[RMDB]
RNA sequence: GGGAACGACUCGAGUAGAGUCGAAAAUGUUCAUGUGGGACCCAGAUGAGCUCCAUGGAGGGGUCACCCUCCCGAGUACGGAUGCCUUCGGCUUCCGGCUGGAUAUGGAUGAAGACGAGGACACCGCAAAUACCACCUCUUUCGAGAGGUGGUAUUUAAAAGAAACAACAACAACAAC
Reactivity to 2A3 in 0.01 (KOAc 150mM, MgCl2 10mM, bicine 150mM(pH8.5), 24C), signal-to-noise 2, nucleotides 027 to 126: u070g000u070u070c060a050u090g020u010g050g030g030a000c000c020c030a020g040a140u050g030a020g040c040u000c000c030a010u040g030g010a000g000g000g020g070u100c050a200c000c010c000u020c000c010c000g030a010g020u090a230c010g010g020a020u040g020c000c000u150u130c210g010g020c000u020u000c010c010g000g000c010u060g020g030a130u120a030u230g030g020a020u070g040a000a040g060a040c050g020a040g060g000a010c020a010c080c020g000c070
Reactivity to DMS in 0.01 (KOAc 150mM, MgCl2 10mM, bicine 150mM(pH8.5), 24C), signal-to-noise 4, nucleotides 027 to 126: u010g000u010u010c010a050u000g030u010g010g020g010a140c090c010c030a110g000a100u000g000a180g020c070u000c000c030a060u000g030g010a020g020g020g000g000u020c300a080c010c010c010u000c010c010c170g010a070g020u000a060c010g010g000a040u000g000c010c010u000u010c240g010g000c000u000u010c010c000g000g000c030u000g000g020a110u010a060u010g000g000a070u010g010a090a070g000a110c070g000a140g010g000a060c060a100c030c070g030c100